The record gives the reactivity of an RNA of 170 nucleotides to DMS and 2A3. The RNA was probed in 150 mM KOAc, 10 mM MgCl2 and 150 mM bicine (pH 8.5) at 24 C. It was measured as part of the RMDB library 15KLIB.
RNA sequence: GGGAACGACUCGAGUAGAGUCGAAAAUUGAAGGUAAAACAGCCUGUGGGUGAAACACACCCACAGGGCCCCUUGGGCGCUAGCACGCUGGUAUCACGGUACCUUUGUGCGCCUGUUUUACCGAAGGUACGGGUGAAGUUCGCUUCACCCAAAAGAAACAACAACAACAAC
Reactivity to DMS in 0.01 (KOAc 150mM, MgCl2 10mM, bicine 150mM(pH8.5), 24C), signal-to-noise 7, nucleotides 027 to 129: u040u020g020a130a100g020g010u020a000a000a000a000c020a030g000c000c000u010g020u000g010g010g030u000g000a120a130a050c300a230c000a010c030c000c000a030c010a000g000g020g000c000c000c000c170u020u100g020g020g010c030g040c030u010a090g040c000a000c000g000c030u000g000g000u000a000u000c010a080c270g060g000u010a000c000c010u000u000u000g030u000g000c010g010c030c010u010g010u030u020u000u010a010c010c010g010a030a020g000g030u010a060c160
Reactivity to 2A3 in 0.01 (KOAc 150mM, MgCl2 10mM, bicine 150mM(pH8.5), 24C), signal-to-noise 9, nucleotides 027 to 129: u080u090g050a070a010g000g000u010a000a000a000a000c000a000g010c000c000u000g000u000g000g000g000u020g050a050a130a010c140a010c000a000c060c010c000a000c000a000g000g000g000c000c000c010c010u210u290g010g000g000c020g000c090u070a050g000c000a000c000g010c010u010g010g000u010a000u030c030a020c190g140g000u010a000c010c000u010u010u040g010u000g000c010g000c000c000u000g000u000u010u000u000a010c000c000g000a000a010g060g010u070a020c110